About this RNA:
The record gives the reactivity of an RNA of 177 nucleotides to DMS and 2A3. The data come from the RNA Mapping Database (RMDB), libraries RFM100 and RFMREP. DMS (dimethyl sulfate) methylates the pairing face of unpaired adenines and cytosines. The RNA was probed in 150 mM KOAc, 10 mM MgCl2 and 150 mM bicine (pH 8.5) at 24 C.
RNA sequence: GGGAACGACUCGAGUAGAGUCGAAAAGUUGCUUCCUACUGGUGAACUCUCCCUUGUAAUUAGUGGGAGAAAUUCAUGUUUCCGAAGCAUAAAUUAAUUGAUGUAAUUACCAGUAUUAAACAGCACGCAGAUCCACCGUAUUCGUACGGUGGAUCUGAAAAGAAACAACAACAACAAC
Reactivity to DMS in 0.01 (KOAc 150mM, MgCl2 10mM, bicine 150mM(pH8.5), 24C), signal-to-noise 1, nucleotides 027 to 126: g020u030u000g000c030u000u000c020c020u000a050c000u000g040g020u030g000a010a040c120u000c020u000c000c010c010u000u090g000u000a110a170u070u000a120g000u010g000g000g040a010g010a000a020a070u030u000c050a000u000g010u000u000u020c120c260g000a110a190g010c000a090u000a040a010a020u010u010a040a210u000u120g050a010u080g020u010a050a130u000u010a010c000c000a000g000u000a040u000u030a030a030a080c150a040g000c150a160c170g010
Reactivity to 2A3 in 0.01 (KOAc 150mM, MgCl2 10mM, bicine 150mM(pH8.5), 24C), signal-to-noise 4, nucleotides 027 to 126: g060u050u020g020c000u050u020c030c030u000a010c000u020g000g000u010g060a050a020c020u000c000u020c020c000c020u020u030g250u100a300a300u260u100a070g090u110g010g010g010a010g000a000a000a000u030u000c030a000u030g130u030u050u030c150c070g110a020a020g010c020a020u090a070a090a030u090u140a030a090u220u150g120a050u120g100u190a030a090u020u060a020c020c000a000g000u000a040u040u140a080a090a010c070a020g060c050a020c060g000